RNA sequence: GGGAACGACUCGAGUAGAGUCGAAAAGCAGCGAUAAUAAGAAUUUUGGUGAUGCUGAGUUUCUCAGGCUGGGCGUUGAUGACCCUCGGUUUAAAACCGCCUCUUAUUACGCUCCUGGUGCUGCAGAUGGAUUACUAAUCUUCGGAUUAGUAAUCCAAAAAGAAACAACAACAACAAC
Reactivity to 2A3 in 0.01 (KOAc 150mM, MgCl2 10mM, bicine 150mM(pH8.5), 24C), signal-to-noise 2, nucleotides 027 to 126: g000c010a000g000c000g100a110u020a080a010u040a040a010g060a100a070u110u110u280u270g000g000u070g000a070u110g010c000u010g000a010g010u060u150u060c030u000c020a000g030g020c020u100g080g040g030c050g060u060u080g120a130u130g070a050c000c010c060u010c020g030g040u080u200u240a040a090a010a010c020c010g020c000c000u000c000u000u000a030u000u020a000c020g000c030u040c000c000u070g020g040u090g000c020u050g000c000a030g130a300
Reactivity to DMS in 0.01 (KOAc 150mM, MgCl2 10mM, bicine 150mM(pH8.5), 24C), signal-to-noise 4, nucleotides 027 to 126: g010c140a020g010c010g000a140u000a010a020u000a020a030g010a060a140u010u010u020u000g020g020u000g010a140u010g000c020u000g000a060g000u000u000u000c020u000c020a030g010g020c030u000g010g020g000c140g010u010u000g010a120u000g020a050c060c110c010u000c020g000g010u000u000u010a060a060a140a060c030c010g010c300c070u000c000u000u000a030u000u000a030c060g010c040u010c050c030u000g010g010u010g010c030u010g020c050a100g010a180
Chemical mapping of a 177-nucleotide RNA with 2A3 and DMS. Source: RMDB library OK2TST, as collected in RNAgym. For DMS, 5,542 sequencing reads were counted. The RNA was probed in 150 mM KOAc, 10 mM MgCl2 and 150 mM bicine (pH 8.5) at 24 C. High 2A3 reactivity points to a flexible backbone, as in loops and unpaired stretches. DMS adducts were read by reverse transcription with MarathonRT.